Structure probing data (2A3 and DMS) for a 207-nucleotide construct.

RNA sequence: GGGAACGACUCGAGUAGAGUCGAAAAGCACACCUCUCCGCGCAGACGUUCGUUGGUCCAGCACAGUCGACCGCCCCGUCGCGAGCAGAAGGGCGGCAGCACGUCCAACAGACGUUCGUCUGGAGGGUCGGCGUCGAUCACGAAUAUGGCCGGCAGGCAUGCAGAACCUGUUCGCAGGUUCUGCAUGAAAAGAAACAACAACAACAAC
Reactivity to 2A3 in 0.01 (KOAc 150mM, MgCl2 10mM, bicine 150mM(pH8.5), 24C), signal-to-noise 4, nucleotides 027 to 156: g080c050a030c010a050c080c010u060c000u000c010c030g010c010g020c040a040g010a090c030g030u030u020c020g030u060u080g000g010u040c080c070a050g060c090a050c010a100g090u090c040g040a140c030c000g140c020c000c010c000g080u090c040g030c050g050a070g050c050a030g040a110a040g020g000g010c000g010g010c000a020g040c020a030c070g020u000c020c010a030a030c020a100g060a020c040g010u040u030c020g030u020c060u080g000g030a040g020g010g000u000c010g000g000c010g020u050c040g020a070u070c040a030c120g030a090a050u100a080u110g080g000c000c000g000g010c020a000g070g000
Reactivity to DMS in 0.01 (KOAc 150mM, MgCl2 10mM, bicine 150mM(pH8.5), 24C), signal-to-noise 2, nucleotides 027 to 156: g000c030a080c090a070c070c010u000c010u010c020c010g010c130g040c080a120g020a050c020g000u000u000c040g030u000u010g080g010u010c040c070a190g040c020a140c100a180g030u010c030g020a070c060c010g020c020c000c000c010g000u010c070g000c100g030a160g050c050a160g020a190a120g000g010g000c010g010g040c010a120g020c070a200c060g000u010c010c000a040a170c010a080g010a040c060g030u000u000c030g010u010c000u020g020g000a160g030g010g000u010c000g000g000c040g020u000c030g020a030u000c060a080c050g000a090a070u000a220u000g000g010c000c000g040g000c070a150g000g000
The DMS profile rests on 3,335 reads. For 2A3, 3,919 sequencing reads were counted.